[RMDB]
Chemical mapping of a 177-nucleotide RNA with DMS and 2A3.
RNA sequence: GGGAACGACUCGAGUAGAGUCGAAAAUCUAUCACCAGCCCAUGUUUACGACACGAAUGGGCUGUUGGAAAUUACGUAUAGCUCUUGCAACAUCGUGUCGAAACGUUCCCAAGCUAUACGCCACAAAUCGAUAACAAUCAUUCGUGAUUGUUAUCGAAAAAGAAACAACAACAACAAC
Reactivity to DMS in 0.01 (KOAc 150mM, MgCl2 10mM, bicine 150mM(pH8.5), 24C), signal-to-noise 7, nucleotides 027 to 126: u000c050u000a110u010c050a100c080c000a000g020c010c000c000a150u020g010u010u000u010a110c030g020a030c000a010c000g010a080a060u000g010g010g010c000u010g000u010u000g010g000a050a090a080u020u000a110c020g010u000a010u000a010g000c000u000c130u010u010g010c170a080a060c140a060u010c020g030u000g010u000c000g010a070a090a260c070g000u000u000c000c010c000a130a020g000c000u000a010u000a000c000g010c130c140a070c180a030a050a060
Reactivity to 2A3 in 0.01 (KOAc 150mM, MgCl2 10mM, bicine 150mM(pH8.5), 24C), signal-to-noise 7, nucleotides 027 to 126: u010c010u010a120u100c020a010c050c000a000g010c000c000c000a020u050g070u090u190u080a070c030g000a000c000a000c010g040a060a010u010g010g000g000c010u010g010u000u020g030g050a010a080a090u260u160a050c020g010u010a000u000a010g000c000u030c050u140u220g090c080a100a050c020a160u050c010g000u000g010u020c000g010a100a070a010c010g020u000u000c010c010c000a000a000g000c000u000a000u010a020c010g040c020c010a160c030a010a080a040
Source: RMDB library M2PK90, as collected in RNAgym. High DMS reactivity at an A or C suggests that its Watson-Crick edge is free. Conditions: 150 mM KOAc, 10 mM MgCl2 and 150 mM bicine (pH 8.5), 24 C. 2A3 adducts were read by reverse transcription with SuperScript II with manganese.